[RMDB]
RNA sequence: GGGAACGACUCGAGUAGAGUCGAAAAAUUUAGAAUAUCUAGCAUGUAAGGCCUUUCAAUAUUAAUAUAAGCCCAAUAUCAGCUCUUUCUCUUUGUAUUUCAUCUCUUUCUACUCUCCUAUUUGUAUCUGUAAAUUGUCUUUCGAGACAAUUUACAGAAAAGAAACAACAACAACAAC
Reactivity to 2A3 in 0.01 (KOAc 150mM, MgCl2 10mM, bicine 150mM(pH8.5), 24C), signal-to-noise 4, nucleotides 027 to 126: a010u120u150u080a040g020a050a070u080a030u180c050u060a030g020c040a070u100g050u130a050a100g040g010c020c010u040u120u040c060a080a090u070a080u240u180a160a110u130a050u060a130a040g000c000c000c000a030a020u070a050u080c030a030g010c030u000c000u030u060u010c030u010c000u050u080u060g090u080a140u030u040u010c030a100u010c010u000c000u010u100u010c020u020a060c010u000c010u000c010c000u050a150u050u060u060g070u050a050u000